[RMDB]
RNA sequence: GGGAACGACUCGAGUAGAGUCGAAAAGAUAUGGAUGUCCGAAUCUCCCCACCUGGACAUCGGAAACGAUGUACCAGAGGAUCUAGACAGACAUCCUAAGUCAAACUGGCAAGUUCGCUUGCCAGAACAAUCAUACUCACUUCGGUGAGUAUGAUUGAAAAGAAACAACAACAACAAC
Reactivity to DMS in 0.01 (KOAc 150mM, MgCl2 10mM, bicine 150mM(pH8.5), 24C), signal-to-noise 7, nucleotides 027 to 126: g010a040u010a300u010g000g000a010u010g010u000c000c030g010a140a220u000c040u000c110c030c030c050a230c200c010u010g000g000a050c000a000u000c000g000g000a090a070a190c020g000a010u000g000u000a130c000c000a010g010a140g000g000a050u000c140u000a060g000a090c190a050g000a020c000a010u000c000c000u000a050a100g010u010c030a070a110a260c010u000g000g010c000a000a000g000u000u010c210g010c000u000u000g000c000c000a010g010a090a160
Reactivity to 2A3 in 0.01 (KOAc 150mM, MgCl2 10mM, bicine 150mM(pH8.5), 24C), signal-to-noise 5, nucleotides 027 to 126: g010a010u100a030u180g010g000a000u000g010u000c060c050g110a270a300u040c070u100c090c030c010c010a110c020c010u010g000g000a000c000a000u000c000g000g010a040a060a010c010g000a020u010g010u110a300c000c000a000g020a060g030g000a020u080c070u120a050g040a080c040a010g000a000c000a010u000c000c000u030a090a010g040u050c060a030a040a110c000u000g000g000c000a000a020g000u050u120c250g060c110u010u010g000c020c000a000g000a010a000
An RNA of 177 nucleotides, treated with DMS and 2A3 and read out base by base. Reactivities are given for positions 27 through 126. The data come from the RNA Mapping Database (RMDB), library TTRDEL. DMS (dimethyl sulfate) methylates the pairing face of unpaired adenines and cytosines. As a SHAPE reagent, 2A3 marks flexible, mostly unpaired nucleotides at the ribose 2'-OH.